[RMDB]
RNA sequence: GGGAACGACUCGAGUAGAGUCGAAAAUUCUGGGAUUCAUGUGCAGAAUGUGCAGAUUUGUUACAUAGGUAUACAUGUUCCAUGGUGGUUUGCUGCACCCGUCAACCCAUCAUCUAGGUUUUAAGCCCUGCAUGCAUUAGGUAUUUGUCCUAAUGCAGUAUUUACGGCACUUCGGUGCCGUAAAUACAAAAGAAACAACAACAACAAC
Reactivity to 2A3 in 0.01 (KOAc 150mM, MgCl2 10mM, bicine 150mM(pH8.5), 24C), signal-to-noise 4, nucleotides 027 to 156: u100u020c020u060g030g030g010a040u090u020c020a020u060g020u030g040c010a010g050a210a020u020g010u000g000c020a040g130a300u160u300u140g040u090u100a040c030a020u060a060g050g100u120a040u030a140c020a020u060g030u040u020c030c010a010u030g000g010u010g000g030u010u020u070g030c040u040g020c030a060c020c010c010g080u070c010a010a050c030c010c000a010u030c000a000u020c050u090a090g080g050u030u030u070u110a060a050g020c000c000c010u030g080c060a060u030g000c000a000u010u000a010g000g000u090a060u120u120u130g070u050c000c000u000a000a000u000g000c000a000
Reactivity to DMS in 0.01 (KOAc 150mM, MgCl2 10mM, bicine 150mM(pH8.5), 24C), signal-to-noise 1, nucleotides 027 to 156: u010u010c040u000g040g010g010a130u000u000c090a060u000g040u010g040c010a140g000a060a080u000g040u000g020c020a040g000a090u000u000u000g020u020u000a130c070a080u000a030g000g000u000a090u000a040c030a040u000g010u000u000c030c050a060u020g040g000u010g020g030u000u000u000g020c020u020g010c000a110c010c050c020g040u000c050a070a080c030c020c000a070u010c100a060u000c070u000a090g010g020u000u000u010u000a080a180g020c060c000c010u000g010c080a220u010g000c000a000u000u000a000g010g020u000a240u000u000u000g020u000c000c020u000a000a020u010g040c020a020
Structure probing data (2A3 and DMS) for a 207-nucleotide construct. The DMS profile rests on 3,396 reads. The reactions ran in a buffer of 150 mM KOAc, 10 mM MgCl2 and 150 mM bicine (pH 8.5), at 24 C. Source: RMDB library OK3TST, as collected in RNAgym. The 2A3 profile rests on 2,776 reads. For DMS the reverse transcriptase was MarathonRT.